Source: RMDB library OK2TST, as collected in RNAgym.
An RNA of 177 nucleotides, treated with 2A3 and DMS and read out base by base.

[RMDB]
RNA sequence: GGGAACGACUCGAGUAGAGUCGAAAAAAAGCAAAUAGUGUCACAAAUAAUGAUGUGAUCAUGGCGAGAUUGUAUGGAGAGAUUGCGGCUACAAGUUUCGCAUCUGAAAAGAAUACACGGCGUGAUAAACCUCUAAUGCAUUCGUGCAUUAGAGGUUAAAAGAAACAACAACAACAAC
Reactivity to 2A3 in 0.01 (KOAc 150mM, MgCl2 10mM, bicine 150mM(pH8.5), 24C), signal-to-noise 2, nucleotides 027 to 126: a010a000a000g090c130a130a080a040u100a100g090u050g040u080c000a010c010a000a100a060u250a090a100u240g080a060u050g030u030g040a010u030c020a010u030g060g050c020g000a050g020a160u030u150g050u050a040u040g080g030a060g000a010g010a140u070u150g040c040g000g000c000u060a060c080a120a130g060u020u060u150c020g000c010a010u000c010u020g030a050a050a020a050g040a040a020u030a020c070a030c040g090g000c020g010u020g000a030u070a070
Reactivity to DMS in 0.01 (KOAc 150mM, MgCl2 10mM, bicine 150mM(pH8.5), 24C), signal-to-noise 4, nucleotides 027 to 126: a020a070a090g030c080a060a080a070u020a120g010u010g000u000c010a020c060a050a100a080u010a120a080u000g010a170u010g020u010g010a040u000c050a040u000g000g010c020g000a140g010a130u000u000g020u000a040u000g000g010a130g020a050g000a050u010u010g000c040g020g020c110u010a110c180a060a060g010u000u010u020c030g020c030a020u000c040u000g010a060a050a080a080g000a090a040u000a020c060a030c060g010g000c020g030u000g010a050u000a040